Chemical mapping of a 207-nucleotide RNA with DMS and 2A3. It was measured as part of the RMDB library OK3TST. For DMS, 4,141 sequencing reads were counted. For 2A3 the reverse transcriptase was SuperScript II with manganese. Conditions: 150 mM KOAc, 10 mM MgCl2 and 150 mM bicine (pH 8.5), 24 C.
RNA sequence: GGGAACGACUCGAGUAGAGUCGAAAAAAGUAGCUGGGACCAUAGGUUCAAGCCACCAAGCCUGGCUAAUUUUUGUAUUUUUUGUAGAGAUGGGGUUUUGCAUGUUGCCCAGCCUGGUCUCGAACUCCUGAGCUCAACCUAUCCACCUGCCUUGGCAAAUAGUAAAUGCAUUCGUGCAUUUACUAUUAAAAGAAACAACAACAACAAC
Reactivity to DMS in 0.01 (KOAc 150mM, MgCl2 10mM, bicine 150mM(pH8.5), 24C), signal-to-noise 2, nucleotides 027 to 156: a040a100g020u000a020g020c000u000g040g040g000a100c030c040a140u010a090g040g010u010u000c060a080a200g030c090c050a010c010c010a070a110g020c020c000u000g020g010c030u000a010a030u000u000u010u000u030g010u000a010u010u000u000u020u000u000g020u010a140g010a110g000a060u000g020g020g020g010u020u000u000u000g020c000a130u000g000u000u000g010c050c060c030a110g010c040c020u020g000g020u000c000u000c040g030a070a100c030u000c010c040u000g010a090g030c040u000c050a070a060c030c030u000a070u000c020c020a050c050c020u000g000c020c040u010u000g010g040c060a090
Reactivity to 2A3 in 0.01 (KOAc 150mM, MgCl2 10mM, bicine 150mM(pH8.5), 24C), signal-to-noise 2, nucleotides 027 to 156: a010a010g050u020a010g000c020u020g000g040g000a130c050c040a110u120a100g030g010u110u140c050a150a060g070c030c000a020c030c010a080a010g030c020c020u030g020g000c000u010a030a010u020u050u040u050u120g070u010a070u020u040u050u020u060u170g030u040a040g020a070g010a060u110g010g050g000g050u040u110u140u120g030c020a040u060g030u120u070g040c000c010c000a010g010c010c000u040g030g000u020c020u000c050g020a050a060c000u040c010c000u010g050a020g030c000u020c100a050a060c020c030u030a050u010c000c040a000c010c020u100g020c020c020u030u010g070g000c000a000